RNA sequence: GGGAACGACUCGAGUAGAGUCGAAAACAAGACACAUUAUCAUUAAUGUGGGAUACCCCUUGGCAUCCGAUUCAGGACUCCGUUGCGUUAAGCCGCUACUGGCGCAGUGAUUUAGCCCGUGAGGCACAAGGCGUGUAUAUUUCGAUAUACACGCCUUAAAAGAAACAACAACAACAAC
Reactivity to 2A3 in 0.01 (KOAc 150mM, MgCl2 10mM, bicine 150mM(pH8.5), 24C), signal-to-noise 2, nucleotides 027 to 126: c030a020a050g160a070c010a000c000a030u010u040a030u170c080a110u050u190a070a010u000g000u020g020g000g030a020u080a060c000c010c000c000u050u030g060g000c010a060u000c020c030g100a080u090u140c110a050g040g080a050c030u000c010c040g080u010u030g000c020g000u040u070a050a030g030c010c030g020c080u060a040c020u080g050g000c040g000c030a040g030u000g080a100u110u020u130a030g010c030c010c060g080u090g060a140g030g000c020a010c010
Reactivity to DMS in 0.01 (KOAc 150mM, MgCl2 10mM, bicine 150mM(pH8.5), 24C), signal-to-noise 4, nucleotides 027 to 126: c130a120a150g020a280c000a010c000a000u000u000a030u010c170a230u010u010a010a000u000g000u010g010g000g010a150u000a080c020c010c040c120u000u010g000g000c050a090u000c020c040g010a130u010u000c110a090g010g000a080c070u010c060c020g010u010u000g000c070g020u000u000a090a130g010c060c050g020c080u020a040c070u000g010g010c040g020c060a020g020u010g000a140u000u010u000a120g010c010c020c050g000u010g000a080g010g020c080a090c150